[RMDB]
RNA sequence: GGGAACGACUCGAGUAGAGUCGAAAAGGUCGGAUGGGAAGAGUAAAUCCUACGGGAAUCCCCCGGUUCCCCUUAUGUCCAGCCCCUCCCCGGUCCGAGAGAAGGGGGACUCCGGGACUCCUUGCAUUACGCAGAGUGUUCGCACUCUGCAAAAGAAACAACAACAACAAC
Reactivity to 2A3 in 0.01 (KOAc 150mM, MgCl2 10mM, bicine 150mM(pH8.5), 24C), signal-to-noise 6, nucleotides 027 to 129: g040g010u060c020g000g010a030u080g020g020g010a040a020g040a030g080u120a010a100a030u030c020c020u060a060c100g030g010g020a020a070u080c040c030c010c010c000g000g000u030u020c010c000c000c000u070u130a100u200g060u020c020c010a020g020c030c040c000c000u060c010c000c020c010g020g000u040c030c030g040a040g000a000g020a120a060g000g000g000g000g000a010c020u020c020c010g020g010g010a010c000u020c000c000u010u110g020c010a110u100u150a110c080
Reactivity to DMS in 0.01 (KOAc 150mM, MgCl2 10mM, bicine 150mM(pH8.5), 24C), signal-to-noise 6, nucleotides 027 to 129: g040g030u030c070g010g030a090u040g030g050g030a070a060g020a100g040u050a050a100a110u010c040c030u020a030c100g020g040g000a090a090u030c050c020c000c080c180g040g030u000u020c020c010c000c080u040u000a100u040g020u050c030c060a120g010c040c010c020c030u000c010c010c000c010g000g000u060c040c120g000a100g020a110g030a070a080g000g030g010g040g000a020c050u020c140c180g010g000g020a040c050u030c000c000u000u000g030c100a100u000u040a010c090
This 170-nucleotide RNA was probed chemically with 2A3 and DMS. Conditions: 150 mM KOAc, 10 mM MgCl2 and 150 mM bicine (pH 8.5), 24 C. For 2A3 the reverse transcriptase was SuperScript II with manganese. For 2A3, 14,110 sequencing reads were counted.